Record summary
The record gives the reactivity of an RNA of 177 nucleotides to DMS and 2A3. The reactions ran in a buffer of 150 mM KOAc, 10 mM MgCl2 and 150 mM bicine (pH 8.5), at 24 C.
RNA sequence: GGGAACGACUCGAGUAGAGUCGAAAAGAAGACGUGACGAAAAGUCACGAAAAGAGCUAAGAAGGUUCGCUUAGCAAAGAAAAGAAAACGAACUAAAAGAAAAGAGAUCGGAGACGAUCUCAAAAGAUCCAGUCGUAAUGUUCGCAUUACGACUGGAAAAAGAAACAACAACAACAAC
Reactivity to DMS in 0.01 (KOAc 150mM, MgCl2 10mM, bicine 150mM(pH8.5), 24C), signal-to-noise 1, nucleotides 027 to 126: g050a170a210g010a220c000g030u000g000a020c030g000a110a060a040a230g000u000c000a000c000g010a070a000a170a090g000a170g000c000u000a000a000g000a270a110g030g000u010u000c000g030c000u020u000a030g010c010a090a180a070g000a050a130a070a010g000a020a000a010a100c100g000a000a000c080u030a070a070a070a130g000a070a020a050a050g000a030g000a000u000c000g000g010a300g000a120c000g000a000u010c000u000c000a000a020a130a020g000a130
Reactivity to 2A3 in 0.01 (KOAc 150mM, MgCl2 10mM, bicine 150mM(pH8.5), 24C), signal-to-noise 2, nucleotides 027 to 126: g260a070a020g130a030c020g000u000g000a010c020g030a040a160a050a120g000u010c020a000c000g000a000a000a000a010g090a010g000c000u000a000a010g000a150a130g040g010u010u010c020g000c030u000u000a000g010c000a050a100a000g090a040a090a000a000g110a020a080a000a000c000g010a000a000c010u130a080a080a020a000g130a010a050a000a010g010a000g000a000u030c000g030g000a020g020a040c010g010a000u000c020u000c000a030a030a000a000g040a050

It was measured as part of the RMDB library OK1LIB.
For DMS, 1,413 sequencing reads were counted.